[RMDB]
RNA sequence: GGGAACGACUCGAGUAGAGUCGAAAAGUCUAGCGAUUUAGGGAUCCGAUCCGGGUUGCAGAACUCAACUGCAUGAGUACACACGCAAGUCGCGUAUUGGCCGACCGACCAAGGAUCUGCUAGACGAGGACCACUACGUAUUCGUACGUAGUGGUCCAAAAGAAACAACAACAACAAC
Reactivity to 2A3 in 0.01 (KOAc 150mM, MgCl2 10mM, bicine 150mM(pH8.5), 24C), signal-to-noise 2, nucleotides 027 to 126: g000u000c000u000a000g020c020g030a030u040u030u110a090g040g040g010a040u010c000c020g030a030u000c000c000g030g030g050u000u030g030c010a020g040a090a010c000u000c120a060a060c050u180g040c110a140u070g010a000g040u140a090c030a010c010a010c090g020c030a050a060g300u060c020g010c040g050u060a020u010u050g000g030c040c040g080a060c040c020g030a040c070c000a100a060g070g000a000u010c090u090g010c000u000a000g000a000c000g000a030
Reactivity to DMS in 0.01 (KOAc 150mM, MgCl2 10mM, bicine 150mM(pH8.5), 24C), signal-to-noise 2, nucleotides 027 to 126: g020u000c010u000a000g010c000g000a060u000u000u000a110g000g000g000a100u000c050c000g020a030u010c060c040g000g000g000u000u000g010c010a080g030a070a040c110u000c190a030a160c080u010g010c210a110u000g000a030g010u010a050c120a080c300a100c110g010c070a010a060g010u000c050g010c090g000u020a040u000u000g010g040c200c090g000a110c080c040g000a030c090c080a020a140g010g000a000u000c000u010g040c000u000a040g000a000c000g000a070
This 177-nucleotide RNA was probed chemically with 2A3 and DMS. DMS adducts were read by reverse transcription with MarathonRT. Conditions: 150 mM KOAc, 10 mM MgCl2 and 150 mM bicine (pH 8.5), 24 C. For 2A3 the reverse transcriptase was SuperScript II with manganese.